About this RNA
The record gives the reactivity of an RNA of 207 nucleotides to DMS and 2A3. For 2A3, 1,110 sequencing reads were counted. It was measured as part of the RMDB library ARCHII.
[RMDB]
RNA sequence: GGGAACGACUCGAGUAGAGUCGAAAAUUAUGUUGGAAAGAUAACAUGCUGUAGUAAUAAUGAAUUGCGGAACGCCUUAGGCUGGAAACAGAGCAGGGUUAGCAAUCGCUUGUAUACGGUGCAAAGUUUGCGAUGAGCGAUUAGUAUAUCUCGAAUCACUCACCCUUAAGUUCGCUUAAGGGUGAGUAAAAGAAACAACAACAACAAC
Reactivity to DMS in 0.01 (KOAc 150mM, MgCl2 10mM, bicine 150mM(pH8.5), 24C), signal-to-noise 2, nucleotides 027 to 156: u030u000a070u020g020u000u000g000g000a200a050a110g000a130u020a060a140c070a060u000g010c030u010g020u010a100g020u000a090a130u000a050a110u000g010a080a150u000u000g020c030g030g050a150a090c130g040c030c020u000u000a090g030g000c040u010g030g010a120a050a170c050a080g010a110g030c060a040g020g000g030u000u000a120g040c040a080a030u000c010g020c000u000u000g000u000a080u000a110c090g020g000u030g060c050a070a060a170g010u000u000u000g060c020g000a060u010g000a080g030c020g020a060u010u000a060g030u010a160u000a120u000c030u000c030g010a070a130u030c050
Reactivity to 2A3 in 0.01 (KOAc 150mM, MgCl2 10mM, bicine 150mM(pH8.5), 24C), signal-to-noise 2, nucleotides 027 to 156: u160u050a100u090g030u010u050g030g010a090a050a060g060a080u040a140a090c020a040u080g010c020u040g050u090a010g000u070a120a070u090a110a090u130g070a020a040u020u100g060c040g010g060a060a050c040g060c020c010u020u090a030g010g000c030u010g030g050a050a070a090c030a010g020a000g000c020a010g010g000g010u020u060a000g000c000a010a020u020c000g020c010u020u030g040u030a060u040a090c030g020g020u050g020c010a000a030a160g030u090u100u120g050c000g030a050u100g030a030g020c010g010a010u020u010a010g050u020a070u010a020u120c040u020c050g050a040a060u070c020
Reactivities are given for positions 27 through 156. The RNA was probed in 150 mM KOAc, 10 mM MgCl2 and 150 mM bicine (pH 8.5) at 24 C. High 2A3 reactivity points to a flexible backbone, as in loops and unpaired stretches.